[RMDB]
Structure probing data (2A3 and DMS) for a 177-nucleotide construct.
The reactions ran in a buffer of 150 mM KOAc, 10 mM MgCl2 and 150 mM bicine (pH 8.5), at 24 C.
For 2A3 the reverse transcriptase was SuperScript II with manganese.
For DMS, 7,649 sequencing reads were counted.
RNA sequence: GGGAACGACUCGAGUAGAGUCGAAAAAAUGGGCAAAAGAACGGAAGAAGGACUUGGAUAACGAGAAGCCCUUGUUCACCAGGGAGAGGUCGUUGACCAUGUGCUGUAUGUGGACAUUCCGCAGAGAAACACUGUAGCUUUUCGAAGCUACAGUGUUAAAAGAAACAACAACAACAAC
Reactivity to 2A3 in 0.01 (KOAc 150mM, MgCl2 10mM, bicine 150mM(pH8.5), 24C), signal-to-noise 4, nucleotides 027 to 126: a000a000u180g020g010g000c050a060a030a010a040g060a130a030c040g020g020a030a020g050a030a010g060g020a020c010u040u040g020g000a040u090a130a010c030g010a020g020a100a010g010c010c010c030u010u020g020u080u110c070a070c090c020a020g010g020g020a090g000a010g070g080u040c040g080u080u080g040a040c010c020a020u050g050u080g080c030u030g040u120a130u100g040u050g040g010a020c010a080u110u050c010c020g050c040a020g020a020g030a180
Reactivity to DMS in 0.01 (KOAc 150mM, MgCl2 10mM, bicine 150mM(pH8.5), 24C), signal-to-noise 6, nucleotides 027 to 126: a060a040u010g000g010g020c080a050a080a070a060g010a090a080c070g010g000a070a060g010a140a050g010g010a060c030u010u010g000g010a120u010a030a050c090g000a120g010a100a160g010c040c010c010u000u000g000u000u010c120a100c150c040a030g010g000g010a060g000a090g010g010u000c030g010u000u010g000a050c030c020a060u000g000u000g000c020u000g010u010a090u010g020u000g000g000a070c140a160u000u000c020c010g010c090a080g000a150g000a150